[RMDB]
RNA sequence: GGGAACGACUCGAGUAGAGUCGAAAACGAUGUGGGCCUUGCCGGCUUCUGGCGGAUCGUCACCGACGAGCGCACGCUGAAGGCGCUUGAAACGAGCUUCGGCACCGCCUUCAUCGCUGCGCUGGUACGAUAAAUCAGCGUUCGCGCUGAUUUAUCGAAAAGAAACAACAACAACAAC
Reactivity to 2A3 in 0.01 (KOAc 150mM, MgCl2 10mM, bicine 150mM(pH8.5), 24C), signal-to-noise 2, nucleotides 027 to 126: c020g020a040u060g040u080g070g030g060c000c040u040u100g040c040c010g020g040c000u090u050c040u060g080g030c020g020g030a040u010c010g030u010c050a050c100c040g000a040c010g040a020g000c020g000c010a020c000g000c000u010g000a010a000g010g000c010g030c030u020u160g070a090a050a040c120g020a060g030c000u070u070c100g080g000c020a000c000c010g000c000c000u010u010c010a010u010c010g010c080u000g020c000g000c020u030g030g000u050a040
Reactivity to DMS in 0.01 (KOAc 150mM, MgCl2 10mM, bicine 150mM(pH8.5), 24C), signal-to-noise 4, nucleotides 027 to 126: c080g000a060u000g030u000g000g000g000c020c030u000u010g000c080c080g000g000c060u010u010c070u000g020g010c040g000g000a080u000c050g000u000c080a140c060c030g000a050c050g000a010g010c010g010c020a050c010g000c090u010g010a030a020g010g000c000g020c110u010u000g010a020a070a140c150g010a120g000c110u010u010c080g020g020c030a100c300c040g000c000c010u000u000c000a010u000c020g000c250u000g000c020g020c010u000g000g000u000a090
Conditions: 150 mM KOAc, 10 mM MgCl2 and 150 mM bicine (pH 8.5), 24 C. The record gives the reactivity of an RNA of 177 nucleotides to 2A3 and DMS. The data come from the RNA Mapping Database (RMDB), library OK2TST.